[RMDB]
RNA sequence: GGGAACGACUCGAGUAGAGUCGAAAAUAACUUGGCCAUUGAUAGUCUACCUUUGCUGGGAUCCGAAGGAACUGUACUCCCCCUGCCCUCCCCGACCCGCCCAGCUUAGCCGAUGACCUGCACAUCAAAUACGUACCAGGUUCGCCUGGUACGUAUUAAAAGAAACAACAACAACAAC
Reactivity to DMS in 0.01 (KOAc 150mM, MgCl2 10mM, bicine 150mM(pH8.5), 24C), signal-to-noise 2, nucleotides 027 to 126: u030a070a100c060u020u000g010g010c000c040a080u000u010g010a110u000a060g010u000c030u000a090c080c020u000u000u000g010c060u000g000g000g000a090u000c030c020g040a100a070g000g020a050a060c060u000g020u000a140c110u000c020c030c020c020c020u000g010c020c010c010u000c000c010c000c000g020a130c050c000c030g010c030c000c010a040g010c050u000u000a050g030c030c080g000a080u000g000a080c040c010u000g010c080a070c100a030u000c100a080
Structure probing data (DMS) for a 177-nucleotide construct.
It was measured as part of the RMDB library OK2TRN.
For DMS, 1,762 sequencing reads were counted.
Values cover nucleotides 27 to 126.